[RMDB]
RNA sequence: GGGAACGACUCGAGUAGAGUCGAAAAGUUGGGAGACACCAGGCGCACCUCUCCUGCCACCGGGUCGAACAAGCCGCCAAACACCACUGCCUUGAGCACCAAAAGCCAGGCUCCCAAUCCCAGCAGCCUGAAGGGGUGCUUUCGAGCACCCCUUCAGAAAAGAAACAACAACAACAAC
Reactivity to DMS in 0.01 (KOAc 150mM, MgCl2 10mM, bicine 150mM(pH8.5), 24C), signal-to-noise 1, nucleotides 027 to 126: g000u000u030g000g000g000a050g010a090c110a030c060c030a010g040g040c060g000c050a090c030c000u000c030u000c030c000u000g000c000c020a030c040c000g010g000g000u020c030g000a070a050c160a030a090g030c050c000g000c000c030a020a170a070c120a070c040c160a090c050u000g000c050c020u010u030g000a000g040c050a040c230c000a090a050a130a260g000c060c000a090g030g000c000u000c000c040c000a010a030u000c000c000c000a250g040c120a050g000c300
Reactivity to 2A3 in 0.01 (KOAc 150mM, MgCl2 10mM, bicine 150mM(pH8.5), 24C), signal-to-noise 1, nucleotides 027 to 126: g010u030u020g030g040g000a030g020a040c040a060c080c070a040g010g100c020g050c000a060c020c000u000c010u020c000c010u000g000c000c000a030c020c010g020g000g070u020c040g070a080a030c050a030a040g110c000c000g040c040c020a000a090a020c040a010c000c010a000c020u020g000c010c000u010u080g080a030g000c050a060c040c040a020a280a000a000g000c000c000a000g010g000c000u020c030c010c000a000a040u030c020c000c010a000g020c030a010g030c020

Source: RMDB library RFM100, as collected in RNAgym. This 177-nucleotide RNA was probed chemically with DMS and 2A3. DMS adducts were read by reverse transcription with MarathonRT. The 2A3 profile rests on 942 reads.